[RMDB]
RNA sequence: GGGAACGACUCGAGUAGAGUCGAAAAACGGGUAAAAAUCCAAAGAAUAGAGACAAUCCGCAGCUGACCUGGCCAAAAGUAUAUUUACAAAGUAGCUAGGCAGUUCAACGCUCGCUAAGAUGUGGGUUGACCAUUAAUGGUCGGCUUAAGGUACGGGGCUAGAAUCUUACUUCGGUAAGAUUCUAGCAAAAGAAACAACAACAACAAC
Reactivity to 2A3 in 0.01 (KOAc 150mM, MgCl2 10mM, bicine 150mM(pH8.5), 24C), signal-to-noise 2, nucleotides 027 to 156: a000c040g010g000g040u110a020a090a010a040a130u040c120c000a060a100a040g050a120a050u130a060g050a030g010a020c000a020a090u030c060c010g090c060a020g000c010u040g020a300c010c000u010g010g000c010c010a010a040a010a010g000u010a080u040a030u190u300u050a030c010a010a010a000g000u000a000g000c000u000a000g010g000c000a010g000u020u000c010a020a000c080g020c030u040c010g040c030u060a040a040g060a110u080g040u060g100g010g020u000u020g020a010c020c000a040u080u260a130a090u170g000g000u000c000g000g000c000u070u070a060a030g000g010u040a020c030g000g010g030

Chemical mapping of a 207-nucleotide RNA with 2A3. The RNA was probed in 150 mM KOAc, 10 mM MgCl2 and 150 mM bicine (pH 8.5) at 24 C. Reactivities are rounded to 0.1 and cut off at 0 and 3. Reactivities are given for positions 27 through 156. 2A3 adducts were read by reverse transcription with SuperScript II with manganese.